An RNA of 177 nucleotides, treated with 2A3 and read out base by base. The 2A3 profile rests on 601 reads. For 2A3 the reverse transcriptase was SuperScript II with manganese. Conditions: 150 mM KOAc, 10 mM MgCl2 and 150 mM bicine (pH 8.5), 24 C.
RNA sequence: GGGAACGACUCGAGUAGAGUCGAAAAAAAUUUAAUCCAGAUGCUAAAAACUUCAAAAUUUACGAAGUGACAGAUCAAAAUCAAUUUGUGGAUAGUUUCACCCCAGAUACUUCAAAACUUAAAGAUGCUCAACGUACUGUUUCGACAGUACGUUGAGAAAAGAAACAACAACAACAAC
Reactivity to 2A3 in 0.01 (KOAc 150mM, MgCl2 10mM, bicine 150mM(pH8.5), 24C), signal-to-noise 2, nucleotides 027 to 126: a000a000a080u200u160u110a010a030u010c000c000a000g000a050u120g080c040u080a000a000a000a000a300c000u000u000c000a100a050a060a300u160u160u000a240c080g000a080a000g000u000g000a000c090a010g140a040u030c070a050a140a000a060u040c140a060a110u050u090u130g140u130g010g000a030u050a020g090u000u000u030c070a030c000c000c000c000a000g000a040u070a080c020u120u060c000a000a000a050a140c070u010u300a240a140a000g140a090u130g010